Conditions: 150 mM KOAc, 10 mM MgCl2 and 150 mM bicine (pH 8.5), 24 C. This 207-nucleotide RNA was probed chemically with 2A3. For 2A3, 612 sequencing reads were counted. For 2A3 the reverse transcriptase was SuperScript II with manganese.
RNA sequence: GGGAACGACUCGAGUAGAGUCGAAAACGAUUGCAACCAAGUUGAACGCCGCCAUCAAUGCGAUGGCUAAGCUUCCUGUCACUGCGUCCGUGGCUGCCAGUACGGUAACCAUUACAGCCCGAUGGGGUGGUCCUUCAGGCAAUGACAUCAAUGUACGCCGGAAUAUAGUCUUCGGACUAUAUUCCGGAAAAGAAACAACAACAACAAC
Reactivity to 2A3 in 0.01 (KOAc 150mM, MgCl2 10mM, bicine 150mM(pH8.5), 24C), signal-to-noise 1, nucleotides 027 to 156: c030g090a090u100u210g000c010a100a060c050c050a000a140g060u000u080g100a090a010c110g010c020c000g000c000c000a020u010c040a040a290u280g180c170g060a030u000g020g000c000u000a040a000g000c010u010u030c000c040u070g020u070c010a000c040u110g030c030g020u040c020c070g080u140g000g010c000u000g020c030c010a040g110u120a050c050g080g000u020a060a010c050c000a040u010u130a050c050a040g000c000c000c000g010a040u010g090g000g070g000u070g000g040u090c000c070u050u060c050a030g000g060c000a000a080u100g050a070c020a040u080c050a070a100u230g000u080a010c060g000